[RMDB]
RNA sequence: GGGAACGACUCGAGUAGAGUCGAAAAACCUUUGUGUAGAACGAUGCUGUUUCUUGGAUUUAUGGAGAUGAAGCAUAACCCAUUGGGUUAUGUGGAAGUCUCCAUUGUCAGAAACAGGGCAGUUCUACACUCUGGUAAAGAGCAGUUCGCUGCUCAAGCGCCCAGCAAUGUUCGCAUUGCUGGGCGCAAAAGAAACAACAACAACAAC
Reactivity to 2A3 in 0.01 (KOAc 150mM, MgCl2 10mM, bicine 150mM(pH8.5), 24C), signal-to-noise 1, nucleotides 027 to 156: a000c050c000u020u050u000g010u000g000u000a010g000a030a030c030g090a260u100g110c070u050g060u020u000u000c040u030u270g270g040a100u300u300u040a020u070g010g020a010g040a050u300g000a020a010g030c000a000u000a000a000c070c020c150a190u190u300g040g000g000u000u000a020u000g020u000g000g040a040a000g010u000c000u020c000c000a000u000u000g000u000c000a000g020a000a010a010c000a000g000g080g020c000a000g000u000u080c000u000a000c000a000c000u000c000u000g020g030u040a090a120a010g000a000g000c020a010g020u030u130c200g030c170u000g030c000u040c000a030a050
An RNA of 207 nucleotides, treated with 2A3 and read out base by base. Reactivities are rounded to 0.1 and cut off at 0 and 3. Values cover nucleotides 27 to 156. Source: RMDB library RNAMAK, as collected in RNAgym.